The record gives the reactivity of an RNA of 177 nucleotides to 2A3 and DMS. It was measured as part of the RMDB library OK2TST. Values are in units of 0.01, from 0 to 300, in steps of 10. Values cover nucleotides 27 to 126. The RNA was probed in 150 mM KOAc, 10 mM MgCl2 and 150 mM bicine (pH 8.5) at 24 C. The 2A3 profile rests on 891 reads.

[RMDB]
RNA sequence: GGGAACGACUCGAGUAGAGUCGAAAAUACGGAGAUCUUUAUGCAAGACUGAAGAUAGCUAGGACGAUGCCGUGCAUACUUCCUGAUGCCUUCUAGAAAUUGAGAAACAUCCUUAGGAAGAGAAUUCACGACAUGACAGCUUCGGCUGUCAUGUCGUAAAAGAAACAACAACAACAAC
Reactivity to 2A3 in 0.01 (KOAc 150mM, MgCl2 10mM, bicine 150mM(pH8.5), 24C), signal-to-noise 1, nucleotides 027 to 126: u170a010c040g040g010a050g000a040u030c010u030u100u160a110u230g050c020a090a000g040a050c050u040g010a050a000g030a070u090a020g000c040u060a030g020g000a030c020g020a020u030g000c000c000g000u010g040c000a030u060a050c000u020u000c000c000u000g020a040u070g000c060c060u000u000c010u020a070g110a170a250a150u200u180g020a060g080a000a030a000c000a040u000c040c050u130u110a010g000g000a020a000g010a010g020a050a030u140u080c060
Reactivity to DMS in 0.01 (KOAc 150mM, MgCl2 10mM, bicine 150mM(pH8.5), 24C), signal-to-noise 2, nucleotides 027 to 126: u000a040c050g000g000a110g010a030u000c010u000u000u000a080u000g010c050a080a070g020a140c060u000g020a050a080g010a040u000a080g010c070u020a140g030g030a060c090g010a090u000g010c020c030g060u000g000c100a070u000a080c010u000u000c000c000u000g000a020u000g010c150c090u000u000c020u000a110g000a060a090a150u010u000g000a040g000a020a100a050c080a020u000c000c300u000u000a050g020g040a060a010g000a200g000a090a050u020u010c070